An RNA of 207 nucleotides, treated with 2A3 and DMS and read out base by base.
For 2A3, 768 sequencing reads were counted.
For DMS the reverse transcriptase was MarathonRT.
For DMS, 2,309 sequencing reads were counted.
Reactivities are given for positions 27 through 156.
The RNA was probed in 150 mM KOAc, 10 mM MgCl2 and 150 mM bicine (pH 8.5) at 24 C.
RNA sequence: GGGAACGACUCGAGUAGAGUCGAAAACUCCCGUCAGCGGGAUAAAUACAAGAAGAUCUUCCGGGGCUACUGGUAAUUCUUGUUCUCCACUAAAUGCCACCUCAGGAAGUGGGAGAUUCACACCUCUUAAUCCAAGAGCAAAGAUUGAGAAACAGAACACUCCUAUCCUAUUCGUAGGAUAGGAGUGAAAAGAAACAACAACAACAAC
Reactivity to 2A3 in 0.01 (KOAc 150mM, MgCl2 10mM, bicine 150mM(pH8.5), 24C), signal-to-noise 2, nucleotides 027 to 156: c030u000c000c000c020g080u100c090a060g050c030g030g020g000a030u050a050a100a030u130a040c080a080a070g070a030a030g020a130u050c070u110u010c130c030g010g000g070g060c060u150a040c070u170g020g030u050a080a070u070u040c030u040u110g030u070u020c010u000c040c000a040c020u060a090a030a030u070g000c010c020a050c030c030u100c030a040g070g020a090a030g020u040g010g060g010a080g010a020u080u090c070a020c020a060c100c050u010c010u010u080a030a030u030c050c040a070a020g030a020g090c010a000a040a100g030a010u070u110g020a060g040a030a040a010c030a040g090a050a000
Reactivity to DMS in 0.01 (KOAc 150mM, MgCl2 10mM, bicine 150mM(pH8.5), 24C), signal-to-noise 1, nucleotides 027 to 156: c070u010c010c000c020g000u000c020a100g040c010g000g030g010a040u000a030a040a080u020a110c070a070a090g010a070a130g000a120u010c020u000u000c010c000g050g010g000g060c110u000a050c050u000g010g030u010a050a160u030u010c040u020u000g040u010u010c050u000c000c020a080c050u000a050a060a120u000g020c020c010a050c060c020u000c070a190g030g010a000a040g010u000g100g050g000a120g010a080u020u000c100a040c030a090c100c000u000c020u000u000a030a070u000c040c040a040a070g020a160g030c130a100a150a090g010a040u000u010g030a030g010a040a050a120c030a090g010a090a190